Annotation: Chemical mapping of a 177-nucleotide RNA with DMS and 2A3. The 2A3 profile rests on 4,983 reads. Values cover nucleotides 27 to 126. Conditions: 150 mM KOAc, 10 mM MgCl2 and 150 mM bicine (pH 8.5), 24 C. 2A3 adducts were read by reverse transcription with SuperScript II with manganese.
[RMDB]
RNA sequence: GGGAACGACUCGAGUAGAGUCGAAAAGCACCGCCGCAGUGCAGCCAACCUCCAACCGCACACACGCUGCCCGAGCCUGCUUCUGUCGCAGUCAUACCCGGUCCGGGGCCGGACCCGGGUAGGCGUACACCUAUAUGCUGUUCGCAGCAUAUAGGUGAAAAGAAACAACAACAACAAC
Reactivity to DMS in 0.01 (KOAc 150mM, MgCl2 10mM, bicine 150mM(pH8.5), 24C), signal-to-noise 5, nucleotides 027 to 126: g010c050a100c030c060g010c070c040g010c090a110g010u010g020c050a100g010c060c040a090a130c070c010u000c040c030a080a100c070c040g010c050a060c090a070c110a060c080g010c030u000g000c030c010c030g000a110g020c030c030u000g000c040u000u010c040u010g010u010c070g010c080a080g000u000c050a140u000a050c010c000c000g010g000u000c010c010g020g020g030g030c130c030g020g010a020c070c040c040g020g000g020u000a000g010g010c020g000u000a150
Reactivity to 2A3 in 0.01 (KOAc 150mM, MgCl2 10mM, bicine 150mM(pH8.5), 24C), signal-to-noise 3, nucleotides 027 to 126: g030c010a020c070c050g090c020c000g010c070a040g010u050g050c020a010g100c040c000a060a100c020c030u000c010c020a050a100c040c020g020c010a020c000a010c000a000c140g030c010u040g020c020c000c020g040a040g050c000c040u060g030c010u060u030c020u070g120u080c050g000c080a030g020u030c020a130u060a050c010c000c020g000g010u000c010c000g050g010g270g070c160c010g040g000a050c080c160c020g000g000g010u000a010g000g010c010g030u020a010